[RMDB]
RNA sequence: GGGAACGACUCGAGUAGAGUCGAAAACUCGAAUCUUUCGAGAUUCGAGACUCUCGAAGUGUCAAUAAGAUCGAAAAGAUCGCCGAGCAUAAAAUAGAGACAAUGCUGCUUGAUUCGUCAAGCAGAAUAAUUCGGUAAACUUCGGUUUACCGAAUUAAAAAGAAACAACAACAACAAC
Reactivity to DMS in 0.01 (KOAc 150mM, MgCl2 10mM, bicine 150mM(pH8.5), 24C), signal-to-noise 4, nucleotides 027 to 126: c010u000c000g010a010a000u010c010u000u000u040c150g030a010g010a010u000u000c000g000a020g010a080c120u010c010u000c010g000a160a150g030u000g000u000c040a100a110u000a110a130g000a010u000c000g000a080a060a080a190g000a020u000c010g020c130c110g020a090g010c300a080u010a060a060a080a080u000a080g000a130g020a040c140a050a110u010g000c000u000g000c000u000u000g000a030u000u010c210g010u000c000a010a010g010c000a000g010a080a080
Reactivity to 2A3 in 0.01 (KOAc 150mM, MgCl2 10mM, bicine 150mM(pH8.5), 24C), signal-to-noise 3, nucleotides 027 to 126: c000u000c000g000a010a020u010c010u060u090u160c240g080a010g020a010u010u000c000g000a010g030a020c000u020c000u000c040g070a240a040g040u020g030u090c030a040a080u190a210a030g000a030u000c020g040a050a190a080a180g010a010u000c000g020c040c010g050a060g030c050a090u090a120a220a190a040u110a120g080a010g010a020c040a000a120u100g030c010u020g000c000u010u020g000a010u050u010c090g020u010c100a010a000g000c010a000g000a000a010

About this RNA:
An RNA of 177 nucleotides, treated with DMS and 2A3 and read out base by base. For DMS the reverse transcriptase was MarathonRT. It was measured as part of the RMDB library M2PK50. Values cover nucleotides 27 to 126.